[RMDB]
About this RNA:
Structure probing data (DMS and 2A3) for a 177-nucleotide construct. The data come from the RNA Mapping Database (RMDB), library TTRDEL. For DMS, 5,761 sequencing reads were counted. For DMS the reverse transcriptase was MarathonRT. For 2A3 the reverse transcriptase was SuperScript II with manganese. Conditions: 150 mM KOAc, 10 mM MgCl2 and 150 mM bicine (pH 8.5), 24 C.
RNA sequence: GGGAACGACUCGAGUAGAGUCGAAAAGAUAUGGAGCAUCCUACUGUGACGAAGAACUCGGAAACGAGGGAGUCACUUAGGAGUGCUCCUAAGUCAAAACCCUAUGAAUCUUCGGAUUCAUAGGGAACCAUUAUCGGUAGUUCGCUACCGAUAAUGGAAAAGAAACAACAACAACAAC
Reactivity to DMS in 0.01 (KOAc 150mM, MgCl2 10mM, bicine 150mM(pH8.5), 24C), signal-to-noise 5, nucleotides 027 to 126: g000a040u010a300u000g010g000a010g020c000a080u000c000c010u000a010c250u010g010u000g000a010c010g010a090a110g000a110a210c000u000c010g010g000a120a090a180c000g010a020g000g000g000a070g000u000c000a000c000u000u000a010g000g000a020g020u000g010c000u000c000c000u000a010a040g010u000c020a110a090a080a120c000c000c000u000a000u010g000a030a010u000c000u000u010c230g040g000a010u000u000c000a010u000a000g000g010g000a000a020
Reactivity to 2A3 in 0.01 (KOAc 150mM, MgCl2 10mM, bicine 150mM(pH8.5), 24C), signal-to-noise 5, nucleotides 027 to 126: g030a010u080a030u160g000g000a000g010c000a010u020c010c000u030a070c160u050g010u010g000a000c010g170a300a140g000a080a030c010u000c010g030g040a060a070a060c000g000a010g020g000g000a010g000u000c000a000c000u000u000a010g000g010a050g060u040g000c000u000c000c000u000a020a000g010u000c000a020a060a090a240c000c000c000u000a000u010g010a010a010u010c020u080u170c300g150g010a010u000u000c000a010u010a000g000g000g000a000a010
High DMS reactivity at an A or C suggests that its Watson-Crick edge is free.